RNA sequence: GGGAACGACUCGAGUAGAGUCGAAAAGAAACUCGUUUCGCGUUGGCUGCCUAAUUCAAGGAAUUAGCGUGCCAUCAUGCUAAGGGUUUGAUAUCUGCUAAAACCCGGUGCAUUCAUCAAUGCAGGUCUCAUCCAAAUGCCUUCGGGCAUUUGGAAACUUGAUUAGUUCCUUCGGGAACUAAUCAAGAAAAGAAACAACAACAACAAC
Reactivity to DMS in 0.01 (KOAc 150mM, MgCl2 10mM, bicine 150mM(pH8.5), 24C), signal-to-noise 1, nucleotides 027 to 156: g000a060a070a110c080u010c000g080u000u000u000c070g020c010g000u010u000g010g040c030u000g020c220c000u010a010a040u000u000c000a170a160g040g000a070a020u000u000a000g000c050g070u000g000c050c000a020u000c050a070u010g020c040u000a270a150g000g000g010u000u000u000g000a080u000a020u000c040u000g000c060u020a120a080a020a070c000c010c010g010g070u010g010c000a070u000u000c030a020u000c040a090a100u020g010c000a060g000g010u010c080u000c090a180u010c000c010a010a020a000u000g000c000c000u000u000c300g090g000g010c000a000u000u000u000g000g000a010a010a060
Reactivity to 2A3 in 0.01 (KOAc 150mM, MgCl2 10mM, bicine 150mM(pH8.5), 24C), signal-to-noise 3, nucleotides 027 to 156: g090a030a080a010c030u020c060g050u060u100u090c090g000c000g030u000u010g000g020c030u060g020c030c000u030a020a010u040u010c120a280a150g180g060a060a020u000u010a010g030c040g030u040g000c010c000a010u020c010a020u070g010c010u030a030a030g000g000g000u010u010u000g010a000u020a020u030c000u010g000c010u020a020a000a010a020c010c010c010g010g020u030g010c050a110u150u180c030a080u140c060a110a130u180g000c010a000g000g040u040c040u070c070a070u010c010c000a000a000a000u000g000c020c010u060u060c120g090g000g000c000a000u000u000u000g000g000a010a000a000
An RNA of 207 nucleotides, treated with DMS and 2A3 and read out base by base. For DMS the reverse transcriptase was MarathonRT. Source: RMDB library M2RFPK, as collected in RNAgym. The DMS profile rests on 2,423 reads. The 2A3 profile rests on 1,941 reads.